RNA sequence: GGGAACGACUCGAGUAGAGUCGAAAAACAAACUGAAAGCUACGAAGAAAGCAAUGGUGUCACAGAGGAAAACACGCCGUCGUGUCGCGGCACGGUCGUCGGGGACGCGACCGACGCACAGGCCGAGAUCAUGCGUGCAGUUCGCUGCACGCAUGAUAAAAGAAACAACAACAACAAC
Reactivity to DMS in 0.01 (KOAc 150mM, MgCl2 10mM, bicine 150mM(pH8.5), 24C), signal-to-noise 2, nucleotides 027 to 126: a210c100a020a040a080c100u030g010a120a060a110g000c050u020a030c120g010a130a070g030a060a060a050g020c050a110a070u010g000g000u000g000u000c050a060c070a040g000a090g010g000a040a080a100a030c070a060c060g030c170c120g010u000c020g010u000g010u000c070g040c000g000g040c060a000c010g000g020u000c130g010u000c050g000g000g000g000a050c010g000c000g030a030c000c010g000a030c000g020c110a070c080a080g000g030c020c000g000a110g020
Reactivity to 2A3 in 0.01 (KOAc 150mM, MgCl2 10mM, bicine 150mM(pH8.5), 24C), signal-to-noise 1, nucleotides 027 to 126: a020c040a020a030a010c020u080g020a140a110a000g050c030u100a070c150g070a110a110g030a220a150a000g000c060a000a110u100g020g000u070g010u050c040a000c010a070g050a080g080g030a040a010a040a050c050a000c070g050c030c000g040u020c040g030u050g040u130c020g020c000g020g030c060a020c020g020g010u170c050g090u090c000g030g020g060g020a010c030g000c000g040a020c000c000g010a010c010g000c000a010c020a010g050g020c010c000g020a050g060
The record gives the reactivity of an RNA of 177 nucleotides to DMS and 2A3. DMS adducts were read by reverse transcription with MarathonRT. The RNA was probed in 150 mM KOAc, 10 mM MgCl2 and 150 mM bicine (pH 8.5) at 24 C. The DMS profile rests on 1,023 reads. Reactivities are given for positions 27 through 126.